[RMDB]
RNA sequence: GGGAACGACUCGAGUAGAGUCGAAAAAUCCAAAUCUGAGCCAUUGAUUUGGAAACUUAAAGGCUUGGAUACAUUUAAGAAGAGAGAGAAAAAAUGAAUUGUAUUUAAAGGCUUGAAUUAAUUUAAGACGUUAAACAGAGUUCGCUCUGUUUAACGUAAAAGAAACAACAACAACAAC
Reactivity to DMS in 0.01 (KOAc 150mM, MgCl2 10mM, bicine 150mM(pH8.5), 24C), signal-to-noise 2, nucleotides 027 to 126: a120u010c000c000a050a060a010u000c010u010g010a160g020c190c240a050u020u020g000a010u000u000u000g000g000a030a100a100c100u010u000a040a060a050g000g000c010u000u000g000g000a010u000a020c020a010u010u000u000a090a080g020a080a060g000a140g010a140g030a140g030a010a030a090a090a090a070u000g000a010a010u020u020g000u010a020u000u000u010a030a050a020g000g010c010u000u010g010a100a080u040u020a050a090u030u020u010a070a100g010
Reactivity to 2A3 in 0.01 (KOAc 150mM, MgCl2 10mM, bicine 150mM(pH8.5), 24C), signal-to-noise 3, nucleotides 027 to 126: a000u000c000c000a000a000a010u010c030u110g040a030g120c050c010a170u130u100g000a000u030u010u000g030g000a070a030a000c030u090u130a100a100a030g070g000c010u000u010g020g000a010u020a020c010a010u110u130u090a100a050g070a140a030g050a010g010a000g020a010g160a060a130a030a060a020a000u090g010a020a040u110u050g020u010a020u010u010u050a150a110a000g030g000c010u030u040g020a050a020u030u120a080a080u120u130u110a040a000g100